[RMDB]
RNA sequence: GGGAACGACUCGAGUAGAGUCGAAAAAGCACAUGUUAGUCAUGUAUUAUGGUGUUUCCCAACACGUAUCUUUGCUCUAGUAUUGAACUUUAGUGAUGAGUGUACUUGGCAUGUACACCUGAUUAGUUAGCCCUUGUGGAUACGCCACUGCCGCUCAGCAACAAUAUACGUUCGCGUAUAUUGUUGCAAAAGAAACAACAACAACAAC
Reactivity to 2A3 in 0.01 (KOAc 150mM, MgCl2 10mM, bicine 150mM(pH8.5), 24C), signal-to-noise 8, nucleotides 027 to 156: a000g050c040a020c020a020u170g030u050u090a090g090u210c040a030u100g120u210a070u140u080a050u100g040g000u020g010u010u020u000c000c010c010a010a020c070a010c030g060u090a050u060c030u060u120u140g030c010u010c020u070a060g020u050a190u110u160g090a110a060c040u090u100u080a070g030u080g140a100u020g030a030g040u000g000u000a010c010u030u010g010g000c000a000u060g000u010a010c000a010c010c010u030g020a060u050u080a050g150u030u130a030g000c000c020c000u070u150g030u070g030g010a030u030a100c040g020c020c020a050c040u050g010c010c050g030c040u060c060a030
Reactivity to DMS in 0.01 (KOAc 150mM, MgCl2 10mM, bicine 150mM(pH8.5), 24C), signal-to-noise 3, nucleotides 027 to 156: a090g000c060a010c020a050u000g010u000u000a110g020u000c040a080u000g010u000a070u010u000a070u010g030g020u000g020u000u000u000c020c040c020a140a130c080a070c060g010u000a040u000c020u000u000u000g020c050u000c030u020a050g020u000a230u000u000g010a090a080c030u000u010u000a070g040u000g020a070u000g010a090g010u000g020u000a010c010u000u000g030g040c030a290u000g020u000a010c000a010c000c030u000g000a130u000u000a080g020u010u010a130g010c030c080c090u000u020g050u000g010g000a080u000a020c030g030c030c040a050c080u010g020c020c000g010c050u010c030a300
Overview:
An RNA of 207 nucleotides, treated with 2A3 and DMS and read out base by base. Conditions: 150 mM KOAc, 10 mM MgCl2 and 150 mM bicine (pH 8.5), 24 C. 2A3 adducts were read by reverse transcription with SuperScript II with manganese. Reactivities are given for positions 27 through 156.